[RMDB]
RNA sequence: GGGAACGACUCGAGUAGAGUCGAAAAGCAGAGCGCAGCCAAUUCUGUUGCCGUCGACAGCCACGGCCACGGCGUCCGAGAGGGCGGCUCUACAAAACCUAGCUCAGCGUCUGCAACGCGGAGACAUCUCGGCGUGGCGGAGCGCAAACUAUGCUCCCAUGUGAGUGACAUUCGUGUCACUCACAUGAAAAGAAACAACAACAACAAC
Reactivity to 2A3 in 0.01 (KOAc 150mM, MgCl2 10mM, bicine 150mM(pH8.5), 24C), signal-to-noise 2, nucleotides 027 to 156: g050c030a000g010a000g000c160g000c220a050g010c030c000a100a140u120u050c030u090g000u000u100g000c000c000g020u050c060g080a120c090a060g050c070c040a050c090g050g000c010c050a020c000g000g000c000g020u030c010c030g020a020g030a070g050g000g050c000g000g010c000u000c000u010a040c040a000a100a000a000c040c040u040a010g020c000u000c110a030g000c020g040u000c010u040g020c030a050a000c000g000c020g060g000a020g030a060c080a200u080c030u030c030g210g000c000g000u040g020g020c050g020g010a100g040c020g000c020a020a030a020c060u080a060u190g000c020u030c020c020